[RMDB]
Structure probing data (2A3) for a 207-nucleotide construct.
Conditions: 150 mM KOAc, 10 mM MgCl2 and 150 mM bicine (pH 8.5), 24 C.
High 2A3 reactivity points to a flexible backbone, as in loops and unpaired stretches.
Source: RMDB library OK3TST, as collected in RNAgym.
RNA sequence: GGGAACGACUCGAGUAGAGUCGAAAAACAUCUCAGUGGGAUCUGGAUGCCAAAGCCGCCAACGCAGACCUGGGCCGCUGCAUCAACAGGAAAACAGUGUCAGAGGCACCCAAGGGAGGGCCCAAGCAGGGCUGGAGGGAGGUCCAGCUCUGGGCUGCAGUGUCAAUCCAUUCGUGGAUUGACACUGAAAAGAAACAACAACAACAAC
Reactivity to 2A3 in 0.01 (KOAc 150mM, MgCl2 10mM, bicine 150mM(pH8.5), 24C), signal-to-noise 1, nucleotides 027 to 156: a000c030a020u110c050u000c010a000g030u040g000g090g010a090u030c010u060g050g000a020u020g030c020c010a070a120a010g000c030c040g000c050c030a160a040c110g010c040a000g010a130c000c010u050g010g000g010c030c010g030c000u010g020c020a040u060c030a090a170c080a110g140g000a030a120a060a020c030a040g010u020g040u100c070a050g010a110g170g000c030a080c010c020c000a030a040g030g010g000a050g060g000g000c050c000c000a040a030g020c030a010g010g000g000c000u000g020g020a030g080g020g010a040g070g050u000c040c000a000g000c000u000c010u030g000g000g000c040u080g010